[RMDB]
RNA sequence: GGGAACGACUCGAGUAGAGUCGAAAACUUGAUCACAGCUCACUUCAGCCCCAGACCCCUGGGCUGAAGCAAUCCUCCUACCUCAGUCUCCCUAGUAGCUAGGACUACAGGAGCAUGCCACCAUGACUGGCUAAUUAAAAAAAAAAUUGUAGGAUCACACUGAUACUCGAUUCGUCGAGUAUCAGUGAAAAGAAACAACAACAACAAC
Reactivity to 2A3 in 0.01 (KOAc 150mM, MgCl2 10mM, bicine 150mM(pH8.5), 24C), signal-to-noise 2, nucleotides 027 to 156: c030u080u070g030a020u110c050a040c070a120g050c020u020c030a020c030u000u000c000a000g030c050c000c010c010a040g010a260c010c000c000c000u000g000g000g000c010u010g000a000a000g000c000a020a050u040c020c000u010c000c000u010a030c040c000u070c050a050g080u060c030u040c020c010c000u040a030g000u010a020g000c040u040a070g020g160a240c000u040a000c030a040g000g020a020g000c010a030u100g010c020c000a020c010c010a170u190g040a110c040u020g020g020c000u030a080a090u130u230a200a070a010a000a000a000a040a010a000a050u150u100g000u040a040g050g010a080u100c060a030